[RMDB]
RNA sequence: GGGAACGACUCGAGUAGAGUCGAAAAGGUUGAAACAGUUUAACAAUGGCCUGGUGGCUCAAACUGGAAAUUUAGGUGCAGAAGAAAUUGCUGAUAUUGCUGUCACCACGGUAGCAGGUAUCGCUGCGCUAAAACAAAUAUUCGUAUUUGUUUUAGCAAAAGAAACAACAACAACAAC
Reactivity to 2A3 in 0.01 (KOAc 150mM, MgCl2 10mM, bicine 150mM(pH8.5), 24C), signal-to-noise 7, nucleotides 027 to 126: g070g010u050u070g060a060a080a020c040a040g010u040u040u140a110a060c090a110a090u070g040g000c010c000u060g080g000u080g020g000c010u030c080a050a060a070c050u040g020g110a070a100a110u160u150u100a110g000g050u080g040c050a010g040a130a000g060a030a150a060u160u080g010c030u040g040a060u040a040u160u070g030c050u020g030u060c000a020c070c010a030c110g020g000u010a010g070c010a010g020g050u050a040u090c070g000c050u030g000c020
Reactivity to DMS in 0.01 (KOAc 150mM, MgCl2 10mM, bicine 150mM(pH8.5), 24C), signal-to-noise 8, nucleotides 027 to 126: g010g000u010u010g000a090a050a140c110a050g000u010u000u010a070a110c150a090a070u020g010g010c000c000u010g020g010u020g000g000c030u000c110a020a040a070c030u000g000g000a050a050a070u010u010u020a040g020g010u010g000c050a060g010a070a100g000a050a060a060u010u020g000c030u010g010a070u020a060u020u000g000c050u000g000u010c020a050c080c060a060c170g000g010u000a020g010c000a030g000g010u000a040u010c120g010c020u000g010c120
Chemical mapping of a 177-nucleotide RNA with 2A3 and DMS. The data come from the RNA Mapping Database (RMDB), library OK1LIB. DMS (dimethyl sulfate) methylates the pairing face of unpaired adenines and cytosines. DMS adducts were read by reverse transcription with MarathonRT.